[RMDB]
RNA sequence: GGGAACGACUCGAGUAGAGUCGAAAAGCAUAUCUUCGGAUAUGCAAAAAGGGGUCAAACUUUGAUCUUGUCAGCUGUGGCUGAAGCCUCCACGGCCAAACAGCUUGGAUUUAGGGAGUUUGACGGAGGCACCCAAAAACCGGAGUUCGCUCCGGAAGUAUUACACACGGUUCGCCGUGUGUAAUACAAAAGAAACAACAACAACAAC
Reactivity to 2A3 in 0.01 (KOAc 150mM, MgCl2 10mM, bicine 150mM(pH8.5), 24C), signal-to-noise 2, nucleotides 027 to 156: g000c000a010u000a000u000c010u010u030c090g000g000a010u010a000u000g000c000a030a000a060a000a000g120g010g030g000u050c050a040a020a030c030u070u040u120g150a270u300c100u210u230g190u190c020a000g000c000u000g010u010g000g000c000u000g010a070a000g020c000c000u000c000c000a010c010g020g030c000c000a100a230a050c010a010g050c000u130u250g180g050a170u110u160u290a050g010g020g000a000g000u000u010u000g010a000c000g000g000a000g000g000c010a010c000c000c000a000a100a040a020a030c010c010g020g000a000g000u050u100c090g110c140u000c010c030g000g010a000a010

The data come from the RNA Mapping Database (RMDB), library RNAMAK. The record gives the reactivity of an RNA of 207 nucleotides to 2A3. The 2A3 profile rests on 1,850 reads. As a SHAPE reagent, 2A3 marks flexible, mostly unpaired nucleotides at the ribose 2'-OH. 2A3 adducts were read by reverse transcription with SuperScript II with manganese.